RNA sequence: GGGAACGACUCGAGUAGAGUCGAAAAAAUGGCACUGCAGAGCUGAUGGGCCAUGUACCUAUCCAAAAUGAGAUCCCAUCUUGCACACUGUGCUAAUUUGAGAUUCGCAUGCCUCCUACUUGGAGAGACCGCAUGCCCAGCUUCGGCUGGGCAUGAAGCUCCGAACUUAAUUCGUUAAGUUCGGAGCAAAAGAAACAACAACAACAAC
Reactivity to 2A3 in 0.01 (KOAc 150mM, MgCl2 10mM, bicine 150mM(pH8.5), 24C), signal-to-noise 1, nucleotides 027 to 156: a000a000u050g000g000c000a000c010u040g020c110a050g020a000g080c020u020g030a000u000g020g040g030c040c030a120u070g000u100a080c000c020u120a240u300c020c010a110a140a080a000u220g030a140g040a260u120c000c000c000a000u000c000u080u250g000c010a020c010a000c120u030g010u000g000c020u020a070a210u010u010u100g110a070g020a070u060u030c070g010c050a050u100g080c000c010u060c000c000u030a160c120u010u180g060g000a050g010a020g030a090c020c000g050c000a000u000g000c000c010c010a000g000c020u010u220c300g070g020c000u000g010g000g000c000a000u000g010a000a000
The data come from the RNA Mapping Database (RMDB), library M2RFPK.
The record gives the reactivity of an RNA of 207 nucleotides to 2A3.
The reactions ran in a buffer of 150 mM KOAc, 10 mM MgCl2 and 150 mM bicine (pH 8.5), at 24 C.